Chemical mapping of a 177-nucleotide RNA with DMS and 2A3. The 2A3 profile rests on 5,990 reads. The RNA was probed in 150 mM KOAc, 10 mM MgCl2 and 150 mM bicine (pH 8.5) at 24 C. It was measured as part of the RMDB library OK2TRN.
[RMDB]
RNA sequence: GGGAACGACUCGAGUAGAGUCGAAAAGGGGCGGCCUUCGACCAGCGCCGUGACCCCCUGACCGGGGAGGGCGCGGGCUUCGCUGGCCGCCGGGACGGUUAGCCCACGCGCCUGCGCCUCAGCGGUGUAAAAUCUAGUUGUUCGCAACUAGAUUUUAAAAAGAAACAACAACAACAAC
Reactivity to DMS in 0.01 (KOAc 150mM, MgCl2 10mM, bicine 150mM(pH8.5), 24C), signal-to-noise 9, nucleotides 027 to 126: g010g010g010g020c010g000g000c000c010u000u000c020g010a050c070c040a050g010c020g010c000c010g020u010g010a220c050c000c000c000c010u010g010a150c290c260g010g000g010g010a250g000g000g010c000g000c000g000g000g010c220u010u000c020g020c040u000g000g010c010c000g010c010c000g000g000g000a060c040g010g000u000u000a110g010c020c010c030a110c090g010c120g000c020c010u000g010c040g010c030c020u000c070a110g010c050g010g000u000g000
Reactivity to 2A3 in 0.01 (KOAc 150mM, MgCl2 10mM, bicine 150mM(pH8.5), 24C), signal-to-noise 2, nucleotides 027 to 126: g110g020g020g000c000g010g000c010c000u010u030c030g040a030c020c040a030g000c060g020c010c020g020u080g180a170c000c020c010c010c020u030g080a110c030c040g030g020g000g000a130g040g020g010c010g000c020g000g010g000c070u080u040c010g000c010u000g000g010c000c000g000c000c000g000g000g010a010c000g010g050u070u110a020g050c000c020c010a030c030g050c020g030c010c010u060g000c010g010c040c020u070c070a070g030c010g010g020u060g010